An RNA of 177 nucleotides, treated with 2A3 and DMS and read out base by base. It was measured as part of the RMDB library TTRDEL. For DMS the reverse transcriptase was MarathonRT. Reactivities are given for positions 27 through 126.

[RMDB]
RNA sequence: GGGAACGACUCGAGUAGAGUCGAAAAGAUAUGGAUCGUAGCAGCUUGGAUUUACGAUUCUACUCGGAAACGAGUAGGGUUGUCAGCUGCGUUCGAUCCUAAGUCAAAAGGGGAGUUCGCUCCCCAAGAUGAGUAUUGCCUUCGGGCAAUACUCAUCAAAAGAAACAACAACAACAAC
Reactivity to 2A3 in 0.01 (KOAc 150mM, MgCl2 10mM, bicine 150mM(pH8.5), 24C), signal-to-noise 1, nucleotides 027 to 126: g010a010u060a010u080g000g000a000u010c020g000u070a040g030c000a000g000c020u250u300g080g080a300u300u180u300a070c040g010a000u070u000c000u010a010c000u030c000g000g010a030a080a030c010g000a000g000u060a000g040g000g000u010u010g060u120c030a010g000c000u000g040c020g000u000u030c000g010a000u000c000c000u010a080a010g030u020c010a000a000a120a110g000g000g020g010a040g000u080u080c230g050c090u010c000c030c000c000a000a000
Reactivity to DMS in 0.01 (KOAc 150mM, MgCl2 10mM, bicine 150mM(pH8.5), 24C), signal-to-noise 2, nucleotides 027 to 126: g000a030u020a300u000g000g000a000u000c010g020u010a200g030c000a000g000c000u010u010g030g000a190u030u020u000a120c010g010a010u000u000c000u000a000c000u040c000g030g020a080a090a100c020g000a010g010u010a020g000g000g000u000u000g000u000c100a050g000c000u000g010c000g000u010u010c000g000a010u000c000c020u020a010a110g000u030c040a100a050a170a130g030g000g020g020a030g020u000u010c180g000c000u000c000c010c000c040a000a000